Conditions: 150 mM KOAc, 10 mM MgCl2 and 150 mM bicine (pH 8.5), 24 C. Structure probing data (2A3 and DMS) for a 177-nucleotide construct. Source: RMDB library OK2TST, as collected in RNAgym. 2A3 adducts were read by reverse transcription with SuperScript II with manganese. The 2A3 profile rests on 2,435 reads.
RNA sequence: GGGAACGACUCGAGUAGAGUCGAAAAGAGACGCAGUCCUUGGGGAACGCACUAAUGUGCUCAUUGGUGGGGAAGAGGAAGUCAUAAUUUGACACCGAAAAACCAGCCACAGGGAAAGGCAGGUUGACACCUACCUCAGUUUCGACUGAGGUAGGUGAAAAGAAACAACAACAACAAC
Reactivity to 2A3 in 0.01 (KOAc 150mM, MgCl2 10mM, bicine 150mM(pH8.5), 24C), signal-to-noise 3, nucleotides 027 to 126: g030a000g020a000c070g000c230a010g060u000c010c020u020u020g000g020g000g040a060a080c060g020c000a000c000u110a250a120u200g000u040g060c050u040c060a140u020u140g040g020u150g010g090g010g020a020a070g030a050g100g020a140a000g030u000c010a030u040a300a150u140u050u050g020a010c040a030c030c010g080a070a020a000a010a010c010c010a000g020c030c000a060c040a080g060g000g020a020a010a010g050g030c010a010g060g000u020u010g040a020
Reactivity to DMS in 0.01 (KOAc 150mM, MgCl2 10mM, bicine 150mM(pH8.5), 24C), signal-to-noise 3, nucleotides 027 to 126: g010a090g010a040c080g020c140a100g000u010c030c040u010u000g020g010g000g020a090a090c190g000c010a020c020u000a120a100u000g010u000g010c030u000c180a150u010u000g010g020u020g000g000g000g020a090a070g010a170g000g010a090a080g020u000c020a010u000a050a180u000u000u000g010a030c010a120c040c010g020a040a060a070a040a060c050c000a070g000c000c020a080c060a130g000g010g010a050a070a070g000g020c000a020g000g010u000u000g010a250